RNA sequence: GGGAACGACUCGAGUAGAGUCGAAAACCAGGUCCGAAAUCAACCUCCAUGGUUUCCUGCCUGGGCCUCUUCGCCGGGGGCGCUCCGUCUUCGUUCUUCUUCCUUCUCAACAGUCCGACGAUGUUUCCUCACACUGUGUUCGCACAGUGUAAAAGAAACAACAACAACAAC
Reactivity to DMS in 0.01 (KOAc 150mM, MgCl2 10mM, bicine 150mM(pH8.5), 24C), signal-to-noise 9, nucleotides 027 to 129: c000c000a050g000g010u020c100c300g010a020a030a040u030c020a070a130c000c000u050c080c080a210u030g010g010u010u010u000c030c100u000g040c020c010u010g000g000g000c030c020u030c060u030u020c070g030c120c060g020g000g010g010g000c100g030c000u000c020c030g020u020c010u000u000c070g030u030u020c030u000u000c030u000u000c010c010u050u000c040u000c000a070a110c210a130g010u000c020c050g020a070c090g000a120u020g010u050u020u030c010c010u010c300
Reactivity to 2A3 in 0.01 (KOAc 150mM, MgCl2 10mM, bicine 150mM(pH8.5), 24C), signal-to-noise 9, nucleotides 027 to 129: c000c000a000g010g020u040c040c040g030a020a010a030u060c020a050a280c020c040u070c040c030a060u050g010g010u010u020u010c010c020u020g030c000c000u010g000g010g000c010c000u050c010u090u080c060g050c060c030g000g010g000g010g010c030g010c030u030c010c010g070u030c010u070u060c040g070u030u010c000u030u000c000u030u040c010c000u060u030c030u010c020a060a130c030a050g060u010c020c020g040a050c040g060a120u080g010u020u020u010c010c000u050c000
An RNA of 170 nucleotides, treated with DMS and 2A3 and read out base by base.
2A3 adducts were read by reverse transcription with SuperScript II with manganese.
The reactions ran in a buffer of 150 mM KOAc, 10 mM MgCl2 and 150 mM bicine (pH 8.5), at 24 C.